[RMDB]
RNA sequence: GGGAACGACUCGAGUAGAGUCGAAAAUUUUCCGUCCAUGGACCCCGCCCCUCCUUCCACGCCUCCUCACAGAGCCGCAUCUGCAACAUGCUCAGCCUGGUGGCACACGGCUGUGCGUGCCUGUGCCCACCGUACCCUCAUUCGUGAGGGUACGGUGAAAAGAAACAACAACAACAAC
Reactivity to DMS in 0.01 (KOAc 150mM, MgCl2 10mM, bicine 150mM(pH8.5), 24C), signal-to-noise 3, nucleotides 027 to 126: u020u020u000u010c000c000g000u030c050c060a080u020g010g010a090c060c020c020c060g020c050c020c050c020u000c030c050u000u000c030c030a080c080g040c030c000u010c060c010u000c060a070c090a090g000a090g010c010c040g020c020a040u010c050u020g010c060a080a120c080a040u010g000c010u000c030a090g010c030c020u000g010g020u020g010g000c020a030c010a070c170g020g010c010u000g030u010g000c060g000u020g000c020c000u010g010u030g010c020c010
Reactivity to 2A3 in 0.01 (KOAc 150mM, MgCl2 10mM, bicine 150mM(pH8.5), 24C), signal-to-noise 5, nucleotides 027 to 126: u060u040u040u010c000c010g010u020c030c020a090u090g080g040a080c020c010c010c010g020c010c010c000c000u020c010c010u050u050c010c000a040c020g020c000c010u030c010c000u020c020a060c020a020g070a020g030c010c010g040c020a040u030c040u090g020c010a040a050c010a110u110g020c000u030c040a010g000c010c010u100g060g010u050g050g020c030a010c010a020c090g020g000c030u060g030u060g080c030g040u010g010c000c010u020g010u020g000c000c000
Structure probing data (DMS and 2A3) for a 177-nucleotide construct.
For 2A3, 6,551 sequencing reads were counted.
The RNA was probed in 150 mM KOAc, 10 mM MgCl2 and 150 mM bicine (pH 8.5) at 24 C.
It was measured as part of the RMDB library OK1LIB.
For 2A3 the reverse transcriptase was SuperScript II with manganese.
Reactivities are given for positions 27 through 126.